[RMDB]
RNA sequence: GGGAACGACUCGAGUAGAGUCGAAAAGAAAUUAUUUCAACUGUACACUUAUAGCAUUCACUUAGCUACGUACUGUGACGUAUUCUAUACUAACGUGGAUUACAAAUCGACGUUCAAGUGAAAGAAAGGCAAUACUAAACUUCGGUUUAGUAUUGCCAAAAGAAACAACAACAACAAC
Reactivity to DMS in 0.01 (KOAc 150mM, MgCl2 10mM, bicine 150mM(pH8.5), 24C), signal-to-noise 2, nucleotides 027 to 126: g000a070a040a180u000u040a050u000u000u050c090a010a060c030u000g060u000a020c000a060c140u000u040a100u060a010g000c020a110u000u050c090a050c150u000u020a030g000c030u000a030c140g000u000a090c030u000g000u000g010a200c140g000u000a000u000u000c090u010a150u000a170c080u000a000a010c070g010u000g000g000a000u000u000a130c280a080a040a100u040c000g060a010c000g010u010u000c150a000a080g060u010g000a100a130a060g000a050a060a180
Reactivity to 2A3 in 0.01 (KOAc 150mM, MgCl2 10mM, bicine 150mM(pH8.5), 24C), signal-to-noise 3, nucleotides 027 to 126: g050a010a160a000u230u130a080u060u190u070c100a120a100c010u020g070u070a020c000a030c060u140u080a090u070a210g010c010a030u010u110c060a150c140u090u060a010g000c020u010a000c050g010u030a020c020u080g050u040g040a030c060g050u050a060u080u030c030u000a040u070a100c070u010a090a000c000g000u050g100g030a000u080u030a090c080a030a260a000u000c010g080a000c000g000u020u030c080a110a000g000u010g070a130a030a050g170a080a060a030